[RMDB]
RNA sequence: GGGAACGACUCGAGUAGAGUCGAAAAUCGGGCCACCCCAGGGCCAGGCCUGCUUGCCCUGCUUAGGAGCUGGGUCUCCCACUCAGGGAGGGAGGGGUCAUGUCUCAAGGGCAGCCACUGGGCCUGAGAUCUGUAUAGGGUUCGCCCUAUACAGAUCAAAAGAAACAACAACAACAAC
Reactivity to DMS in 0.01 (KOAc 150mM, MgCl2 10mM, bicine 150mM(pH8.5), 24C), signal-to-noise 5, nucleotides 027 to 126: u000c090g010g000g020c010c040a160c050c020c020c040a190g000g000g010c040c040a030g000g010c050c030u000g000c040u000u000g000c010c000c000u000g010c140u000u000a090g010g000a040g020c030u000g020g010g010u010c040u000c000c000c010a090c070u000c120a100g010g010g010a080g020g000g000a060g000g000g010g010u000c060a060u010g000u010c020u000c050a200a080g010g000g010c070a050g010c040c200a060c080u010g000g010g010c050c020u000g000a180
Reactivity to 2A3 in 0.01 (KOAc 150mM, MgCl2 10mM, bicine 150mM(pH8.5), 24C), signal-to-noise 4, nucleotides 027 to 126: u050c010g010g030g000c020c000a050c010c000c000c010a050g000g010g020c020c010a010g010g010c010c030u060g030c020u060u090g020c010c000c000u020g030c060u100u150a110g020g180a030g030c030u130g050g060g130u060c030u000c020c000c000a030c010u100c070a060g030g110g050a130g050g060g050a070g010g010g030g100u050c040a100u100g080u020c010u020c050a040a040g020g000g000c030a010g040c010c010a060c090u060g030g020g040c010c000u010g000a040
Notes
Chemical mapping of a 177-nucleotide RNA with DMS and 2A3. For 2A3, 8,125 sequencing reads were counted. 2A3 adducts were read by reverse transcription with SuperScript II with manganese. DMS adducts were read by reverse transcription with MarathonRT. It was measured as part of the RMDB library OK2TST. Reactivities are given for positions 27 through 126.